[RMDB]
RNA sequence: GGGAACGACUCGAGUAGAGUCGAAAACUGGCUAUAGUCAUCGUCUACGAAAACAAGAUCAUAGUUCAUGAGAGGGAAAUAACAAAAGUUACCUCCAAAAGUAACGACUUUCAUGUCUGCGCUUGUACCUCAUACUCGAAGUUAAUUGUGAGAGUAAAAUUGUACAGGGGUUCGCCCCUGUACAAUUAAAAGAAACAACAACAACAAC
Reactivity to DMS in 0.01 (KOAc 150mM, MgCl2 10mM, bicine 150mM(pH8.5), 24C), signal-to-noise 1, nucleotides 027 to 156: c070u000g010g000c000u000a110u000a110g000u000c030a130u000c020g010u020c000u000a150c050g010a130a090a110a080c060a080a090g050a140u010c030a020u010a080g020u000u000c010a060u000g000a060g010a060g060g010g000a040a130a150u000a100a290c130a090a000a040a170g000u000u000a020c000c040u000c040c300a000a200a120a080g000u000a020a030c030g020a070c030u010u030u000c060a080u000g000u000c020u010g030c060g010c040u030u040g010u000a140c100c000u010c020a050u000a010c010u000c050g030a020a100g000u010u000a040a170u050u000g020u000g000a040g000a120g000u000a070a090
Reactivity to 2A3 in 0.01 (KOAc 150mM, MgCl2 10mM, bicine 150mM(pH8.5), 24C), signal-to-noise 2, nucleotides 027 to 156: c020u020g020g000c020u070a030u090a300g130u100c050a060u080c050g050u000c090u100a070c060g080a050a110a030a030c050a030a030g000a090u140c030a080u140a160g050u190u030c000a020u050g010a000g000a020g130g050g040a000a150a040u150a090a040c060a010a060a080a020g000u000u010a020c000c020u020c050c040a030a070a070a000g000u000a000a010c030g000a000c020u020u060u000c010a000u020g010u020c040u020g030c040g000c040u000u050g020u020a050c040c000u000c040a030u020a040c010u020c030g020a080a000g060u040u110a080a070u120u160g030u030g050a060g000a020g050u020a030a200